[RMDB]
Structure probing data (2A3 and DMS) for a 207-nucleotide construct. Reactivities are given for positions 27 through 156. As a SHAPE reagent, 2A3 marks flexible, mostly unpaired nucleotides at the ribose 2'-OH. The RNA was probed in 150 mM KOAc, 10 mM MgCl2 and 150 mM bicine (pH 8.5) at 24 C.
RNA sequence: GGGAACGACUCGAGUAGAGUCGAAAACAGAUAAGAAAAGACCGAGAGGUUCUAGCUUAUAGGGCAGAAAGCGGGGGACAGCAGUACUAAACAUUCCCUGUGGCUGAGACGAAGGUAGUACUCCAACAAAACGAGUACUAGUUCGCUAGUACUCGAACCCUUACACACUGUUCGCAGUGUGUAAGGGAAAAGAAACAACAACAACAAC
Reactivity to 2A3 in 0.01 (KOAc 150mM, MgCl2 10mM, bicine 150mM(pH8.5), 24C), signal-to-noise 2, nucleotides 027 to 156: c020a010g100a100u100a100a020g030a030a110a020a000g000a010c030c010g020a010g030a010g120g010u080u070c020u000a000g000c000u000u050a020u060a180g060g000g000c090a040g050a070a080a020g030c050g000g000g000g000g000a020c010a030g000c020a000g080u080a060c020u060a050a120a010c010a020u030u040c000c000c020u020g040u050g040g000c050u050g020a000g000a080c040g020a080a010g010g010u010a010g010u000a050c010u000c060c000a040a020c040a040a160a030a010c020g000a000g000u000a000c000u000a000g010u040u060c050g010c130u000a000g000u000a000c000u000c000g010a010a010
Reactivity to DMS in 0.01 (KOAc 150mM, MgCl2 10mM, bicine 150mM(pH8.5), 24C), signal-to-noise 1, nucleotides 027 to 156: c040a150g000a160u000a100a140g000a090a080a110a060g030a100c000c020g020a150g000a270g000g040u000u000c030u000a100g040c010u000u000a040u000a100g050g000g010c070a060g000a060a020a130g030c000g000g020g020g020g010a070c060a060g060c100a030g010u000a140c060u000a020a060a030c060a290u000u000c000c000c020u000g000u000g040g040c040u030g000a100g010a120c040g020a080a030g010g000u000a070g040u000a080c020u000c030c030a020a080c060a030a030a160a180c010g000a040g020u000a020c000u000a020g000u000u000c260g000c000u000a060g060u000a030c020u000c040g000a020a040